[RMDB]
RNA sequence: GGGAACGACUCGAGUAGAGUCGAAAAAUGCAAGUAGAGAACAAGCACAACAACUUGACCCCUCUGUUCGAAGAGCUCAUGCUUCGAUGCCCGCCUGGGAAACAGAUGAGGUCCGAGCACAUGGUCAUCCGUUACAAGAUUUCGAUCUUGUAACGGAAAAAGAAACAACAACAACAAC
Reactivity to DMS in 0.01 (KOAc 150mM, MgCl2 10mM, bicine 150mM(pH8.5), 24C), signal-to-noise 3, nucleotides 027 to 126: a080u010g010c050a020a070g010u060a030g000a130g020a080a110c060a080a160g040c060a050c120a140a070c150a040a110c080u000u000g000a100c030c030c000c060u010c020u000g000u000u000c030g000a050a030g020a060g000c060u020c120a100u010g020c030u000u030c040g010a020u020g020c010c020c000g020c090c170u030g000g010g010a120a060a100c040a030g000a040u020g010a080g010g000u000c060c060g010a060g000c090a070c120a070u060g010g060u000c070a160
Reactivity to 2A3 in 0.01 (KOAc 150mM, MgCl2 10mM, bicine 150mM(pH8.5), 24C), signal-to-noise 5, nucleotides 027 to 126: a000u110g020c010a060a030g040u090a020g110a030g040a110a050c050a080a040g130c050a020c020a110a150c010a030a050c060u050u050g020a050c000c030c010c000u000c020u000g040u030u030c010g040a030a020g010a040g040c020u020c040a040u160g050c020u060u040c030g080a080u090g040c000c000c000g210c040c160u140g000g000g000a100a040a010c020a010g020a040u050g020a020g000g050u000c020c050g030a000g000c010a010c000a140u080g040g010u030c010a070
An RNA of 177 nucleotides, treated with DMS and 2A3 and read out base by base. For 2A3, 4,423 sequencing reads were counted. For DMS, 4,656 sequencing reads were counted. It was measured as part of the RMDB library OK1LIB.